[RMDB]
RNA sequence: GGGAACGACUCGAGUAGAGUCGAAAAACGGAUGGUACGCCAUCCGACCAUUGGGUAGAAGCGUUCAAUCAGCACCGUGACGGUGCAGAUGGGAAAUUGCCCAUGAUACGCACCAUAGGUGGUGCGAAAAAGCCAUCGGUGUUCGCACCGAUGGCAACCUCCCUUAUUCCUUCGGGAAUAAGGGAGGAAAAGAAACAACAACAACAAC
Reactivity to 2A3 in 0.01 (KOAc 150mM, MgCl2 10mM, bicine 150mM(pH8.5), 24C), signal-to-noise 2, nucleotides 027 to 156: a000c030g040g000a020u000g030g000u020a020c230g000c000c000a000u000c000c000g040a000c000c000a140u050u060g030g030g010u020a010g000a220a000g020c000g040u080u060c050a120a000u010c020a010g000c000a000c000c040g170u250g240a280c300g010g000u000g030c020a000g000a000u050g020g080g000a010a200a150u020u040g000c000c000c000a000u020g030a010u020a070c060g020c000a000c000c000a030u130a090g300g000u150g040g050u000g030c000g040a000a060a000a000a000g000c000c000a000u000c000g000g030u010g070u070u060c250g040c090a000c010c000g000a000u000g000g030c000a000a000